[RMDB]
RNA sequence: GGGAACGACUCGAGUAGAGUCGAAAAGAGACAACAGAUUUGCAUCCCAGACACAUUCACACUGGGCCAAGAGCAGCUGCCAUUGCAGAUUCGAGUCACGUCCUUUUUUCCUUCCUUCUCCUUCUUGCUAUGUCGCACAGUUCGCUGUGCGACAUAGAAAAGAAACAACAACAACAAC
Reactivity to 2A3 in 0.01 (KOAc 150mM, MgCl2 10mM, bicine 150mM(pH8.5), 24C), signal-to-noise 5, nucleotides 027 to 126: g050a000g020a010c020a090a010c040a090g090a110u050u100u120g010c030a040u040c000c020c000a000g080a000c040a010c020a150u170u160c040a050c020a020c070u020g000g030g000c040c030a150a040g040a020g040c030a030g020c020u070g010c000c010a090u060u130g000c020a010g040a100u030u080c040g030a010g050u030c010a010c080g020u050c000c000u020u010u000u010u040u030c020c000u020u060c030c000u050u060c020u030c000c010u010u050c010u000u010g030
Reactivity to DMS in 0.01 (KOAc 150mM, MgCl2 10mM, bicine 150mM(pH8.5), 24C), signal-to-noise 2, nucleotides 027 to 126: g000a050g020a050c130a140a050c270a070g010a040u080u000u000g020c110a100u000c000c000c020a130g000a130c300a030c070a100u010u010c180a200c090a080c060u080g050g000g000c070c010a030a020g060a110g000c040a100g020c000u010g000c000c060a120u050u020g070c030a000g040a120u040u090c040g040a080g030u060c050a020c070g010u000c000c000u040u000u040u000u000u010c000c010u000u060c000c010u010u070c010u000c010c070u000u030c000u000u010g010
Structure probing data (2A3 and DMS) for a 177-nucleotide construct.
DMS adducts were read by reverse transcription with MarathonRT.
The RNA was probed in 150 mM KOAc, 10 mM MgCl2 and 150 mM bicine (pH 8.5) at 24 C.